[RMDB]
RNA sequence: GGGAACGACUCGAGUAGAGUCGAAAAGAUUAUUACAAAGGUCAUAGGAGGGAGAGUAAAGAGGGAAGUAUACAUUUGACUUACAAACAGCCUUCUGUGUAUAACUGAUAUGCUUUUCCUACAAUUUUGGGAUUGUCGUAAUUUAAUAGCGGUGCUAACCCUAAUACCUCUUCGGAGGUAUUAGGGUAAAAGAAACAACAACAACAAC
Reactivity to 2A3 in 0.01 (KOAc 150mM, MgCl2 10mM, bicine 150mM(pH8.5), 24C), signal-to-noise 3, nucleotides 027 to 156: g020a030u080u100a020u080u080a050c030a010a080a050g050g010u020c040a070u120a090g050g010a020g010g040g000a050g010a010g030u060a040a110a020g060a030g010g040g010a040a040g050u030a020u010a040c020a020u100u040u090g050a020c010u070u110a060c080a070a130a020c030a030g050c000c030u080u090c030u040g010u000g000u010a020u030a150a050c040u030g020a070u010a020u160g030c000u040u040u060u090c000c010u010a100c060a100a160u090u100u140u130g020g020g010a030u030u050g030u040c010g020u030a020a090u030u060u140a090a120u110a040g010c040g040g000u030g000c000u000a030
Reactivity to DMS in 0.01 (KOAc 150mM, MgCl2 10mM, bicine 150mM(pH8.5), 24C), signal-to-noise 2, nucleotides 027 to 156: g000a140u010u000a070u000u010a080c020a100a140a080g000g010u000c060a110u000a170g000g010a120g000g020g030a070g000a080g060u010a070a070a140g010a190g000g020g020a080a200g010u000a070u000a010c020a070u000u020u000g020a010c020u040u000a300c060a120a020a040c140a200g000c010c000u000u000c050u000g040u000g020u010a030u000a030a200c030u000g000a100u000a020u000g000c030u020u000u020u000c010c000u010a040c050a100a190u000u000u000u010g010g000g020a050u010u000g000u000c000g000u000a030a050u000u000u020a020a100u010a070g000c040g010g060u000g030c040u000a140
Source: RMDB library OK3TST, as collected in RNAgym. An RNA of 207 nucleotides, treated with 2A3 and DMS and read out base by base. The RNA was probed in 150 mM KOAc, 10 mM MgCl2 and 150 mM bicine (pH 8.5) at 24 C. For DMS, 2,555 sequencing reads were counted.